[RMDB]
RNA sequence: GGGAACGACUCGAGUAGAGUCGAAAACGCUCUAUACUGCCACUUGUGUGAGAAUACUUUUAGUACAAGCGAGUACACGCAGUAUACUGCUACUUGUGUGAGAAUACUUUUAGUACAAGCGAGUACACCGUGUGCUUCCUUUCGAGGAAGCACACGGAAAAGAAACAACAACAACAAC
Reactivity to 2A3 in 0.01 (KOAc 150mM, MgCl2 10mM, bicine 150mM(pH8.5), 24C), signal-to-noise 1, nucleotides 027 to 126: c060g000c000u020c000u000a010u000a000c000u020g010c000c000a030c000u040u110g010u000g010u070g110a090g020a090a010u140a000c050u000u080u240u300a050g010u030a040c000a010a000g000c000g000a030g030u030a010c130a000c070g000c000a000g010u000a000u080a070c010u040g080c000u000a040c050u050u100g010u010g080u070g020a090g050a010a110u060a140c040u060u110u120u180a050g000u000a000c000a030a000g000c000g060a000g030u000a000c000a010

The data come from the RNA Mapping Database (RMDB), library OK1LIB. This 177-nucleotide RNA was probed chemically with 2A3. The reactions ran in a buffer of 150 mM KOAc, 10 mM MgCl2 and 150 mM bicine (pH 8.5), at 24 C.